[RMDB]
RNA sequence: GGGAACGACUCGAGUAGAGUCGAAAACAAUAAAUCUGGUAAGGCACUUUCAAAAAAUAGCCAAACCACACAUCAUAAAGAAAACCACCACAAUCAAAAUCGGUAACUAUCAGCUUUCAGGGGGUCUUGAAAGAUGAUGGUUCGCCAUCAUCUUUCAAAAAGAAACAACAACAACAAC
Reactivity to DMS in 0.01 (KOAc 150mM, MgCl2 10mM, bicine 150mM(pH8.5), 24C), signal-to-noise 2, nucleotides 027 to 126: c030a070a090u050a100a040a090u060c100u000g040g000u000a020a300g000g000c000a090c120u040u040u050c210a000a000a030a060a160a090u020a030g020c000c000a060a180a080c000c060a080c160a050c190a120u000c080a050u040a110a020a120g000a040a100a010a160c240c080a020c000c000a050c170a140a000u080c070a000a050a070a040u000c060g000g060u000a020a060c020u010a030u000c110a000g020c060u000u050u000c000a020g000g000g000g000g000u020c050u000
Reactivity to 2A3 in 0.01 (KOAc 150mM, MgCl2 10mM, bicine 150mM(pH8.5), 24C), signal-to-noise 5, nucleotides 027 to 126: c020a020a060u220a220a120a040u100c080u040g000g020u030a030a050g040g000c000a040c120u080u150u140c200a070a040a040a000a020a060u160a060g000c010c000a030a020a010c030c000a010c050a020c010a050u180c040a040u190a110a090a060g100a020a100a010a010c010c000a000c000c000a030c030a060a050u120c030a010a030a100a140u120c050g040g050u060a030a000c010u050a050u170c030a020g040c020u010u060u050c010a010g000g000g020g000g040u000c010u010